[RMDB]
RNA sequence: GGGAACGACUCGAGUAGAGUCGAAAAGAUAUGGAUGCCCCAUGGGAGCCAAUGUCGGAAACGACAUAAUGGCGAAGAACAUGGCGCAUCCUAAGUCAAAAGCGGGUUAGGUUCGCCUAACCCGCAACAUUAGGAAUUUCUUCGGAAAUUCCUAAUGAAAAGAAACAACAACAACAAC
Reactivity to DMS in 0.01 (KOAc 150mM, MgCl2 10mM, bicine 150mM(pH8.5), 24C), signal-to-noise 4, nucleotides 027 to 126: g000a030u000a160u000g000g000a030u010g020c010c190c010c010a030u010g020g010g000a300g020c010c000a050a040u000g000u000c000g000g010a040a030a070c000g020a020c000a010u010a060a110u000g010g010c020g020a160a200g020a140a130c000a010u010g000g010c300g000c010a000u000c000c000u000a000a050g000u000c020a090a100a150a130g010c000g000g000g010u000u000a010g010g010u000u010c300g030c010c000u010a000a010c000c000c000g020c000a010a030
Reactivity to 2A3 in 0.01 (KOAc 150mM, MgCl2 10mM, bicine 150mM(pH8.5), 24C), signal-to-noise 3, nucleotides 027 to 126: g000a010u030a020u070g000g000a000u000g020c030c060c050c040a010u010g030g120g270a110g020c000c010a010a020u010g020u000c000g000g060a020a010a000c010g020a000c000a010u120a160a300u120g010g010c030g010a080a060g150a010a000c010a000u010g000g000c000g010c000a000u000c000c000u010a020a010g020u000c010a020a060a170a090g010c000g000g000g000u000u010a010g030g060u060u160c300g150c070c000u010a000a010c000c000c010g010c000a010a010
The record gives the reactivity of an RNA of 177 nucleotides to DMS and 2A3. For DMS, 4,345 sequencing reads were counted. The reactions ran in a buffer of 150 mM KOAc, 10 mM MgCl2 and 150 mM bicine (pH 8.5), at 24 C. For 2A3, 6,489 sequencing reads were counted. Values cover nucleotides 27 to 126.